Chemical mapping of a 207-nucleotide RNA with 2A3.
[RMDB]
RNA sequence: GGGAACGACUCGAGUAGAGUCGAAAAUUCACAUCCCUCUCGGCAUUGAGAUGACCAUAGGCCAGGGGUGAGUCCUUAAGUGGACACAGCUGAUCUAAGGCGGUGUGUAGGGGCACGGGUUUUAACACCCCCGUGACGGUCGAAGGCUAUUAGCCUUACCACGUAGUGACUUCGGUCACUACGUGGUAAAAGAAACAACAACAACAAC
Reactivity to 2A3 in 0.01 (KOAc 150mM, MgCl2 10mM, bicine 150mM(pH8.5), 24C), signal-to-noise 1, nucleotides 027 to 156: u040u000c010a000c010a030u000c000c010c000u000c000u010c160g020g000c070a070u180u150g110a130g030a280u210g060a040c000c050a040u060a140g090g090c000c000a000g000g000g000g020u040g000a090g010u030c000c000u300u050a250a230g300u250g010g000a000c000a000c000a010g020c000u060g000a280u190c000u070a070a070g010g000c010g000g000u000g000u000g010u090a000g000g000g000g010c000a000c000g000g130g000u000u240u010u010a080a090c060a040c040c000c000c000c000g000u010g050a070c040g000g000u030c070g060a020a020g000g000c000u040a070u270u190a070g000c000c000u000u020

For 2A3 the reverse transcriptase was SuperScript II with manganese.